[RMDB]
RNA sequence: GGGAACGACUCGAGUAGAGUCGAAAAUUCCUGAAGUAGUAUUUGAAAGUACACUUAGGAUUACUAGAACUCUGUCAACUCAGUACUGCCGGUUCGGUAGUUGUGAGUAUGCACAAGAGGGUGUUUGACUUCAAUAUUCGUUCGCGAAUAUUGAAGUAAAAGAAACAACAACAACAAC
Reactivity to 2A3 in 0.01 (KOAc 150mM, MgCl2 10mM, bicine 150mM(pH8.5), 24C), signal-to-noise 3, nucleotides 027 to 126: u050u010c000c000u000g070a020a010g010u200a000g000u010a050u040u110u170g230a220a160a010g010u000a000c010a010c020u010u010a020g000g030a020u060u070a090c050u060a030g100a160a040c010u000c000u000g010u010c000a000a010c010u000c000a040g080u030a000c000u000g000c010c000g220g190u150u290c080g010g000u020a000g010u000u010g120u010g040a000g000u000a260u040g070c120a010c010a110a000g000a000g030g060g020u060g090u060u110u130g050
Reactivity to DMS in 0.01 (KOAc 150mM, MgCl2 10mM, bicine 150mM(pH8.5), 24C), signal-to-noise 4, nucleotides 027 to 126: u010u000c000c000u000g010a040a020g010u000a110g040u000a010u000u010u020g020a150a170a170g010u000a000c010a040c000u000u010a050g000g010a050u000u000a120c080u000a120g000a150a160c010u010c010u000g010u000c010a020a030c010u000c000a040g010u010a020c000u000g000c000c010g010g000u010u010c040g040g020u000a010g010u000u010g010u000g000a010g010u000a050u000g020c180a020c020a050a060g000a020g010g010g020u000g000u000u000u000g010
The data come from the RNA Mapping Database (RMDB), library 15KREP. Chemical mapping of a 177-nucleotide RNA with 2A3 and DMS. The 2A3 profile rests on 2,395 reads. DMS adducts were read by reverse transcription with MarathonRT.